RNA sequence: GGGAACGACUCGAGUAGAGUCGAAAAAUAUCAUGACCGCACGCAUGCAUAACACCUUCAUUUUCAGAUUUAAAAUCCUGUUCAACAAGCUCUUGAAUCGGUAAAGCAUCAAUGUCAGCCCGAACAGCGUCUUAGCAUCGUUCGCGAUGCUAAGACGAAAAGAAACAACAACAACAAC
Reactivity to DMS in 0.01 (KOAc 150mM, MgCl2 10mM, bicine 150mM(pH8.5), 24C), signal-to-noise 1, nucleotides 027 to 126: a080u000a020u000c040a050u000g020a050c010c000g000c070a000c110g000c040a040u000g060c110a090u000a090a080c020a070c020c020u000u000c060a020u000u000u000u000c080a080g000a080u000u000u000a040a080a040a150u020c060c040u010g040u000u000c070a060a080c120a150a160g110c050u000c030u020u030g020a040a050u000c180g000g010u000a100a020a050g040c070a030u000c070a050a040u000g000u010c070a150g020c000c100c000g030a030a070c160a050g010
Reactivity to 2A3 in 0.01 (KOAc 150mM, MgCl2 10mM, bicine 150mM(pH8.5), 24C), signal-to-noise 1, nucleotides 027 to 126: a020u100a040u040c060a050u110g070a040c050c000g000c000a010c030g000c000a000u060g020c000a030u030a120a040c010a040c020c000u030u020c030a050u100u060u140u020c040a060g040a110u020u150u190a040a060a000a030u010c020c030u030g020u000u010c050a070a070c010a080a120g020c030u000c000u190u130g090a090a040u080c010g020g020u050a020a040a030g050c020a050u070c040a050a000u070g080u010c010a030g060c060c010c000g010a060a040c030a010g080
The record gives the reactivity of an RNA of 177 nucleotides to DMS and 2A3. Values cover nucleotides 27 to 126. The reactions ran in a buffer of 150 mM KOAc, 10 mM MgCl2 and 150 mM bicine (pH 8.5), at 24 C. 2A3 adducts were read by reverse transcription with SuperScript II with manganese.